[RMDB]
RNA sequence: GGGAACGACUCGAGUAGAGUCGAAAAGCGCGAAGCGGUGUAGCGUCACUUUGAUGGCGGUACUAUGAAAUGAUGCAAGGUGUGGAGCGACCUUAAACAGUUCUGGUGGUGCUCUGAAUGGAGUGCUUGAGGCCUCGCCGAUUCGUCGGCGAGGCAACUGAAAACGUGUCUUCGGACACGUUUUCAGAAAAGAAACAACAACAACAAC
Reactivity to 2A3 in 0.01 (KOAc 150mM, MgCl2 10mM, bicine 150mM(pH8.5), 24C), signal-to-noise 1, nucleotides 027 to 156: g050c060g000c050g030a000a050g070c010g170g030u050g030u000a070g050c020g020u060c010a000c050u190u180u300g200a210u110g080g040c000g030g090u020a000c060u050a060u150g090a020a110a070u150g040a040u130g080c070a030a000g000g000u000g020u080g010g000a010g040c020g020a050c000c020u090u060a080a000a000c120a150g000u000u000c020u020g080g080u120g000g000u000g010c010u000c010u050g190a050a070u260g000g040a060g010u000g020c000u020u210g060a050g120g000c000c000u000c000g000c000c010g010a000u000u080c250g060u020c030g120g000c000g000a000g000g000c000a000a000
This 207-nucleotide RNA was probed chemically with 2A3. 2A3 adducts were read by reverse transcription with SuperScript II with manganese. As a SHAPE reagent, 2A3 marks flexible, mostly unpaired nucleotides at the ribose 2'-OH.